[RMDB]
RNA sequence: GGGAACGACUCGAGUAGAGUCGAAAAGUUUGCGAGUCUCCUGGCGGCAGCUGCAGCCUACGGAUCCGCGCACUCUGCCCCCGGAUGCUCCGGACGACCGCAAGUACGACUUCAGCGUGAUCGACAAAUGAUUAGUGAUGUUCGCAUCACUAAUCAUAAAAGAAACAACAACAACAAC
Reactivity to 2A3 in 0.01 (KOAc 150mM, MgCl2 10mM, bicine 150mM(pH8.5), 24C), signal-to-noise 4, nucleotides 027 to 126: g010u020u020u030g050c070g010a020g020u000c000u000c020c010u040g040g000c080g020g000c020a030g010c050u080g000c030a040g020c010c030u060a070c080g090g040a100u050c070c050g020c010g000c040a010c050u080c010u030g000c010c000c000c000c000g000g020a030u050g010c020u020c020c000g000g020a010c020g010a020c010c020g010c060a020a070g030u060a080c050g030a070c090u080u070c100a060g040c030g100u090g050a150u050c010g040a040c040a030a200
Reactivity to DMS in 0.01 (KOAc 150mM, MgCl2 10mM, bicine 150mM(pH8.5), 24C), signal-to-noise 8, nucleotides 027 to 126: g000u000u010u000g000c070g020a050g010u000c210u010c030c040u010g020g010c230g020g020c020a050g020c300u000g000c050a050g010c010c020u020a090c120g000g000a060u010c070c050g010c110g010c050a100c110u010c020u000g000c030c000c030c010c050g010g000a040u010g010c040u000c020c010g000g000a060c050g000a140c010c030g010c110a080a060g010u010a070c070g000a090c040u000u000c090a070g010c050g010u000g000a070u010c040g010a090c140a070a100
This 177-nucleotide RNA was probed chemically with 2A3 and DMS.
The data come from the RNA Mapping Database (RMDB), library OK2TRN.
Values cover nucleotides 27 to 126.
The DMS profile rests on 8,858 reads.
In probing experiments dimethyl sulfate is read out at A N1 and C N3, which are open when not base-paired.
The 2A3 profile rests on 7,251 reads.
DMS adducts were read by reverse transcription with MarathonRT.
High 2A3 reactivity points to a flexible backbone, as in loops and unpaired stretches.